[RMDB]
RNA sequence: GGGAACGACUCGAGUAGAGUCGAAAAUGGAGUUACUCCAUAAAUCGCAGUGGAAAGGCAGGUCAAUCUCAAUUAGGAACGGCGAAGAAGGUGGAAAGCCCUCCUCUGGAGAAGACGAAAGCGAUGCGUUGUCUCACUUCUUCGGAAGUGAGACAACAAAAGAAACAACAACAACAAC
Reactivity to 2A3 in 0.01 (KOAc 150mM, MgCl2 10mM, bicine 150mM(pH8.5), 24C), signal-to-noise 2, nucleotides 027 to 126: u020g000g000a040g100u230u170a180c050u030c010c000a000u030a010a100a030u050c000g000c070a100g010u030g000g000a150a130a130g030g000c020a030g080g000u020c010a100a180u000c000u000c070a040a270u130u110a010g000g070a070a000c010g010g000c010g000a020a000g020a000a000g000g010u060g060g000a100a020a000g030c000c000c000u010c000c000u030c000u030g040g000a090g030a020a010g040a000c000g070a030a100a000g000c010g000a040u100g010c050
Reactivity to DMS in 0.01 (KOAc 150mM, MgCl2 10mM, bicine 150mM(pH8.5), 24C), signal-to-noise 2, nucleotides 027 to 126: u050g000g000a010g000u040u030a150c040u000c000c000a050u010a210a160a140u010c020g010c000a140g090u060g000g000a080a110a160g040g000c020a170g000g000u010c060a080a050u000c020u050c060a060a260u080u000a020g000g010a120a050c050g000g000c020g000a120a180g040a090a090g000g000u010g010g020a090a170a280g010c060c030c040u000c030c000u000c070u030g000g000a040g000a040a060g050a030c090g000a000a190a050g000c080g000a030u030g000c170